The record gives the reactivity of an RNA of 177 nucleotides to 2A3. For 2A3 the reverse transcriptase was SuperScript II with manganese. The RNA was probed in 150 mM KOAc, 10 mM MgCl2 and 150 mM bicine (pH 8.5) at 24 C. For 2A3, 1,272 sequencing reads were counted.
[RMDB]
RNA sequence: GGGAACGACUCGAGUAGAGUCGAAAACGAUCAGUAUACGUACUGAUCGAAUAAAUUCAGCGGUUUAAAUUUCGAGGCCAUAACCGCUGAUGGCCUCGAAAAAGUACGGUCGUACGCGACCGUACAACGACGGGCAUUUAUUCGUAAAUGCCCGUCGAAAAGAAACAACAACAACAAC
Reactivity to 2A3 in 0.01 (KOAc 150mM, MgCl2 10mM, bicine 150mM(pH8.5), 24C), signal-to-noise 2, nucleotides 027 to 126: c020g000a000u000c000a010g010u010a020u010a080c300g040u000a000c080u000g000a010u010c000g000a010a010u140a010a100a050u160u150c050a020g030c020g060g120u100u030u110a060a130a090u120u160u070c030g000a000g000g020c010c010a020u080a080a060c030c030g040c030u030g000a000u030g000g000c020c010u010c010g020a010a000a000a040a000g000u000a000c000g000g000u010c000g020u010a030c220g030c040g120a000c000c000g000u000a000c000a000a000